[RMDB]
RNA sequence: GGGAACGACUCGAGUAGAGUCGAAAAACCACUAAUGAGUGAUAUCCAGGGUGCAUAUGAGAUGCUUACGAAGGUUCACCUUCAAGAGUUUCUUCCUAUGAGAGCCGUACGUCAGGUCGGUACUAACAUCAAGUUAGAUGGCCGUCUGUCGUAUCCACUAUGGAUAGGACUUCGGUCCUAUCCAUAGAAAAGAAACAACAACAACAAC
Reactivity to 2A3 in 0.01 (KOAc 150mM, MgCl2 10mM, bicine 150mM(pH8.5), 24C), signal-to-noise 5, nucleotides 027 to 156: a000c040c020a030c070u200a150a190u210g110a060g070u050g060a040u040a080u120c070c050a050g050g000g030u030g000c020a010u020a040u090g010a030g000a020u020g000c010u030u020a030c070g010a020a000g050g020u110u150c100a270c150c000u020u020c030a040a050g010a010g010u030u010u000c000u060u080c000c020u030a030u060g010a040g030a000g090c050c030g010u010a000c000g010u000c010a000g030g050u170c010g030g000u020a040c000u010a010a000c010a080u250c240a230a080g010u020u020a030g010a170u040g140g000c000c000g010u000c000u000g000u000c000g010u010a040u000c020c000a050
Reactivity to DMS in 0.01 (KOAc 150mM, MgCl2 10mM, bicine 150mM(pH8.5), 24C), signal-to-noise 2, nucleotides 027 to 156: a080c010c010a170c070u010a120a090u000g000a100g030u000g010a110u010a070u000c060c030a110g000g000g030u000g030c050a060u000a050u040g040a100g000a040u000g000c020u000u010a040c300g020a060a030g030g010u000u000c160a100c040c000u000u000c020a080a300g010a060g010u000u000u000c000u000u010c020c020u000a050u000g000a190g000a070g010c130c020g000u000a000c000g020u010c030a000g020g010u000c020g040g000u000a150c010u000a020a030c010a150u000c210a110a290g000u000u000a020g010a080u000g010g010c000c000g000u010c020u010g010u000c000g000u000a040u000c020c020a130